This 207-nucleotide RNA was probed chemically with 2A3.
The 2A3 profile rests on 537 reads.
It was measured as part of the RMDB library RSTRND.
RNA sequence: GGGAACGACUCGAGUAGAGUCGAAAAAAAGACUCGACCAGAGCAUCCUACUGUUCGGGAUAAGGAACAGUCCCCGCCUGAGGGUCAAAAAGGCUAAGCCUGUGAAAGAGCAGUCGAUGAAUAGCUAGGGCGGACACGGGUUCGACUCCCGUCAGCUCCCUAGAAAGAACUUCGGUUCUUUCUAGGGAAAAGAAACAACAACAACAAC
Reactivity to 2A3 in 0.01 (KOAc 150mM, MgCl2 10mM, bicine 150mM(pH8.5), 24C), signal-to-noise 1, nucleotides 027 to 156: a000a000a000g040a010c010u000c010g010a000c030c050a020g000a000g040c020a030u010c000c010u020a040c000u000g010u020u040c040g040g070g020a080u040a270a050g050g000a020a010c000a010g070u080c040c000c010c110g030c000c000u000g000a030g020g000g070u140c060a000a000a000a050a050g010g010c020u020a060a020g000c020c000u020g010u030g150a220a040a180g080a070g000c000a010g010u040c020g040a080u120g070a240a070u110a040g030c080u050a020g040g000g070c020g000g000a010c030a000c000g010g000g000u160u130c000g040a030c040u020c000c000c000g030u000c000a030g000c040u020